[RMDB]
RNA sequence: GGGAACGACUCGAGUAGAGUCGAAAAUGUAGGUUUUUGCUCAUGCACCAUGGUUGUCUGAGCAUGCAGCAUGCUUGUCUGCUCAUACCCCAUGGUUUCUGAGCAGGAAUCUUCAUUGUCUACUGCUUAUUAAAGACUUGUUCGCAAGUCUUUAAUAAAAAGAAACAACAACAACAAC
Reactivity to 2A3 in 0.01 (KOAc 150mM, MgCl2 10mM, bicine 150mM(pH8.5), 24C), signal-to-noise 9, nucleotides 027 to 126: u020g010u010a010g000g010u000u000u000u010u010g000c000u000c000a020u090g010c020a000c000c000a000u010g030g010u120u260g010u010c030u000g000a000g000c000a000u030g000c000a010g010c060a090u260g070c130u110u040g020u030c010u000g000c000u000c000a000u010a010c000c010c000c010a000u000g000g000u010u030u010c010u000g000a000g000c000a000g000g010a000a000u000c000u010u020c000a010u010u050g050u030c020u100a290c040u070g070c020u020
Reactivity to DMS in 0.01 (KOAc 150mM, MgCl2 10mM, bicine 150mM(pH8.5), 24C), signal-to-noise 9, nucleotides 027 to 126: u000g010u000a020g010g010u000u000u000u010u000g010c010u000c000a010u010g020c300a040c010c010a010u010g000g010u000u030g010u000c070u000g000a010g000c000a000u010g010c000a020g010c110a120u020g020c130u010u000g010u000c150u000g000c000u000c000a010u000a010c010c300c000c010a010u000g000g010u000u000u010c150u000g000a010g000c000a000g000g000a010a000u000c000u000u000c000a000u000u000g000u000c060u010a150c060u000g010c260u000